[RMDB]
RNA sequence: GGGAACGACUCGAGUAGAGUCGAAAAGAUAUGGAGACUAUGAAUUCUGAUGACCGAGGUCGGAAACGACCUCGCAAGGAACAUACAUGUCUCCUAAGUCAAACGGGCUGACGUUCGCGUCAGCCCGCAGUCAAUUAGUGUUCGCACUAAUUGACUGAAAAGAAACAACAACAACAAC
Reactivity to DMS in 0.01 (KOAc 150mM, MgCl2 10mM, bicine 150mM(pH8.5), 24C), signal-to-noise 7, nucleotides 027 to 126: g010a020u010a300u000g000g010a010g010a020c010u000a020u010g020a300a260u010u000c010u010g000a150u020g000a200c300c000g000a010g010g020u000c000g020g010a070a050a140c010g020a010c000c000u000c010g010c010a040a090g020g010a040a100c140a040u010a160c300a100u000g000u000c000u000c000c000u010a010a090g010u000c020a050a100a300c030g000g000g020c000u000g010a010c000g010u000u020c280g020c030g020u010c000a000g010c000c000c000g000
Reactivity to 2A3 in 0.01 (KOAc 150mM, MgCl2 10mM, bicine 150mM(pH8.5), 24C), signal-to-noise 6, nucleotides 027 to 126: g000a010u040a020u110g010g010a000g000a030c090u110a100u120g140a290a300u300u070c050u080g300a300u150g010a100c030c050g000a010g000g000u010c010g000g030a030a040a020c020g000a000c000c020u010c000g030c010a040a130g020g010a070a040c010a040u170a040c100a090u190g000u000c000u000c000c000u010a050a000g020u010c040a010a060a170c020g000g010g000c000u000g000a010c010g060u080u110c300g030c020g140u000c000a000g000c020c000c000g010